[RMDB]
RNA sequence: GGGAACGACUCGAGUAGAGUCGAAAAGCGACGAGCUUGUGGAACUCGUGCCGGUCAUUAUCGACGAAUUGCACAAGGCAGCCAAUUCCAUCGGCAUCGAGGAAGUGGACCGCGCCCGUGCGCAAUAAUUAGUCAUUUAGUUCGCUAAAUGACUAAUAAAAGAAACAACAACAACAAC
Reactivity to DMS in 0.01 (KOAc 150mM, MgCl2 10mM, bicine 150mM(pH8.5), 24C), signal-to-noise 9, nucleotides 027 to 126: g010c020g010a100c050g000a130g010c020u000u010g030u010g010g010a100a090c030u000c020g020u000g000c110c020g010g010u010c160a090u010u010a100u010c090g010a070c070g010a040a030u000u000g000c040a060c060a080a090g010g010c070a120g000c050c010a020a050u000u000c010c070a090u010c020g010g010c170a090u010c030g010a040g000g010a030a050g010u000g000g000a120c060c040g010c110g000c020c020c060g010u000g010c040g010c060a080a060u010a090
Reactivity to 2A3 in 0.01 (KOAc 150mM, MgCl2 10mM, bicine 150mM(pH8.5), 24C), signal-to-noise 9, nucleotides 027 to 126: g020c020g050a050c020g010a020g050c000u050u080g030u040g030g080a040a030c010u000c010g000u050g110c050c010g040g030u070c080a140u100u300a120u150c050g030a040c020g010a040a030u030u070g000c010a030c020a130a070g130g000c040a010g020c040c010a000a030u030u000c010c030a110u030c030g070g030c050a110u230c120g010a010g010g020a040a030g050u080g020g050a070c020c040g020c020g010c010c010c020g050u130g050c040g000c020a030a050u160a140